RNA sequence: GGGAACGACUCGAGUAGAGUCGAAAAGGUCCAGCAAUCAUCAGGGGAUGUCUGUAAACCCAAAAUGAUUGUCAUAUAGAACAGAAUCGCCGUGCAGUACGUUGUGGACGAAGCGGCUAAAACUUACACAACUCGCCCAAAGCACCCUGCCCGUCGGGACAUUGCAUGUCUUCGGACAUGCAAUGUCAAAAGAAACAACAACAACAAC
Reactivity to 2A3 in 0.01 (KOAc 150mM, MgCl2 10mM, bicine 150mM(pH8.5), 24C), signal-to-noise 1, nucleotides 027 to 156: g050g050u010c000c000a000g010c000a000a000u010c000a000u000c000a000g000g000g010g010a070u250g080u110c060u080g040u150a080a190a300c010c020c040a060a060a030a000u010g000a000u000u000g000u000c010a000u080a040u140a080g110a060a000c020a080g030a080a020u160c090g000c030c000g060u140g030c010a060g000u080a010c080g030u010u000g050u050g010g000a010c000g010a000a100g000c010g010g060c000u000a000a000a000a040c010u040u130a010c020a000c000a060a020c010u050c120g040c020c010c020a030a070a000g060c040a000c000c000c000u000g010c000c000c000g020u040c010g030g010
An RNA of 207 nucleotides, treated with 2A3 and read out base by base. It was measured as part of the RMDB library ARCHII. Values are in units of 0.01, from 0 to 300, in steps of 10. Reactivities are given for positions 27 through 156. For 2A3 the reverse transcriptase was SuperScript II with manganese.